Source: RMDB library RFMREP, as collected in RNAgym. This 177-nucleotide RNA was probed chemically with 2A3 and DMS. The 2A3 profile rests on 1,054 reads. Values cover nucleotides 27 to 126. DMS adducts were read by reverse transcription with MarathonRT. For 2A3 the reverse transcriptase was SuperScript II with manganese.
[RMDB]
RNA sequence: GGGAACGACUCGAGUAGAGUCGAAAAAGCGGUUACGACCGCACCCGAUGCUUUCAUAUAGAUUCCGCGGGCUCAGGCUUUCGGAGAACGGUGAUGGAUUCCAUGGUCCCAUUGCCGUUUACAUAAAACAUGCUAGGUAUUUCGAUACCUAGCAUGUAAAAGAAACAACAACAACAAC
Reactivity to 2A3 in 0.01 (KOAc 150mM, MgCl2 10mM, bicine 150mM(pH8.5), 24C), signal-to-noise 1, nucleotides 027 to 126: a000g020c050g030g040u090u070a080c210g080a030c030c020g000c000a010c010c000c000g010a060u140g080c040u110u220u080c070a090u090a060u100a280g080a230u130u000c010c010g000c080g020g000g000c010u040c060a100g170g030c000u090u000u010c000g000g020a050g040a030a000c000g000g010u000g010a000u000g050g020a070u170u000c110c060a070u170g070g060u130c060c030c000a000u010u010g000c000c020g000u010u030u000a010c000a000u100a040a080a000
Reactivity to DMS in 0.01 (KOAc 150mM, MgCl2 10mM, bicine 150mM(pH8.5), 24C), signal-to-noise 3, nucleotides 027 to 126: a110g030c000g010g020u000u000a090c190g020a040c010c000g020c010a080c010c000c000g010a100u010g010c120u000u010u000c060a110u010a150u000a080g010a180u010u000c010c000g030c130g010g010g000c030u000c240a090g010g010c000u000u000u000c010g000g000a060g000a030a010c000g000g020u000g010a010u010g000g000a100u000u010c080c140a090u010g000g010u010c080c000c000a000u000u000g000c010c010g030u000u010u000a060c150a090u000a040a040a110